[RMDB]
RNA sequence: GGGAACGACUCGAGUAGAGUCGAAAACGCAAAGCUGCAGCGCGGCGCUCUGGAGGCCUUGCCCCGCGCACUGCUCUUUACAUGGCCCGACGUGAGGGCAAUUCGCGGGCAGUGCUGCGGCCUCGUGAAACUGCCCCUAAGUUCGCUUAGGGGCAAAGAACUGAUUUAGCUUCGGCUAAAUCAGUUCAAAAGAAACAACAACAACAAC
Reactivity to 2A3 in 0.01 (KOAc 150mM, MgCl2 10mM, bicine 150mM(pH8.5), 24C), signal-to-noise 2, nucleotides 027 to 156: c050g000c020a030a030a010g000c000u040g000c010a050g010c010g000c010g130g000c070g060c050u100c100u130g180g030a070g050g000c030c050u100u090g000c030c010c000c010g000c000g010c020a020c010u010g000c010u000c000u090u150u180a050c020a090u120g220g040c010c030c060g090a160c080g050u040g060a060g000g010g020c000a010a020u070u040c040g000c050g040g020g000c010a000g020u000g060c010u010g020c000g000g000c000c000u010c000g000u020g000a070a060a030c040u020g000c000c000c000c000u000a010a000g000u040u060c100g040c190u010u000a000g000g000g010g000c000a000a000a000